[RMDB]
RNA sequence: GGGAACGACUCGAGUAGAGUCGAAAAACGUUGAUAUGGAUUUACUCCGAGGAGACGAACUACCACGAACAGGGGAAACACUACCCGUGGCGUCUCCGUUUGACGAGUAAGUCCUAAGUCAACAUGCAUAGACACGUGUUCGCACGUGUCAAAAGAAACAACAACAACAAC
Reactivity to 2A3 in 0.01 (KOAc 150mM, MgCl2 10mM, bicine 150mM(pH8.5), 24C), signal-to-noise 5, nucleotides 027 to 129: a000c080g010u000u000g000a000u000a010u050g000g000a000u000u000u000a010c000u000c020c000g010a050g000g000a020g030a000c000g000a020a010c070u230a080c090c010a000c010g030a100a050c060a130g000g020g000g020a020a040a000c030a000c020u050a040c000c010c000g000u000g010g000c000g000u010c000u000c020c000g020u090u050u080g010a000c000g000a000g000u000a000a000g000u000c000c000u000a020a000g000u000c000a000a000c000a010u110g030c010a110u090a130
Reactivity to DMS in 0.01 (KOAc 150mM, MgCl2 10mM, bicine 150mM(pH8.5), 24C), signal-to-noise 3, nucleotides 027 to 129: a030c120g040u000u000g010a020u010a110u050g000g050a040u010u020u000a000c030u010c000c050g010a040g030g040a030g030a000c010g030a080a060c040u000a240c060c020a040c030g000a040a070c120a120g040g020g000g060a060a050a060c040a120c050u030a030c280c070c000g020u010g030g030c010g000u010c030u020c010c040g010u000u070u040g020a170c300g020a030g000u000a020a030g010u060c000c040u010a000a030g000u020c000a000a010c030a100u060g070c090a100u050a110